[RMDB]
RNA sequence: GGGAACGACUCGAGUAGAGUCGAAAAUAAAAGCGCGAAAAAGAUCGAUCGAUCGUAUGAACGCGCAAGUCUAAGUUUGAUACGGGCAUACUAGCUAGCUAGCUAGCAAAACAAACUUAGUAAAAAAUCUUAAUCACUUCUUCGGAAGUGAUUAAGAAAAAGAAACAACAACAACAAC
Reactivity to DMS in 0.01 (KOAc 150mM, MgCl2 10mM, bicine 150mM(pH8.5), 24C), signal-to-noise 2, nucleotides 027 to 126: u000a070a070a150a120g040c010g000c010g000a040a110a080a140a170g000a020u000c000g000a130u000c160g000a010u000c010g060u000a030u000g010a140a150c020g010c000g040c010a040a050g000u000c000u000a000a020g000u000u000u000g010a060u010a100c180g010g000g020c100a170u000a110c000u000a020g000c010u000a110g040c220u010a070g000c010u000a010g000c030a020a050a100a130c000a000a010a020c000u000u000a000g000u030a000a040a030a100a030a030
Reactivity to 2A3 in 0.01 (KOAc 150mM, MgCl2 10mM, bicine 150mM(pH8.5), 24C), signal-to-noise 1, nucleotides 027 to 126: u180a030a050a020a020g000c010g000c000g060a040a020a000a020a030g010a000u000c020g050a080u190c170g000a000u000c000g050u110a050u100g040a090a000c000g010c010g000c010a000a000g020u000c000u010a010a000g000u000u020u000g060a080u120a140c040g090g070g000c040a030u070a290c010u000a010g000c010u020a050g110c030u070a020g000c010u010a010g010c010a030a030a030a030c000a010a000a000c000u000u030a000g030u090a080a070a000a000a000a110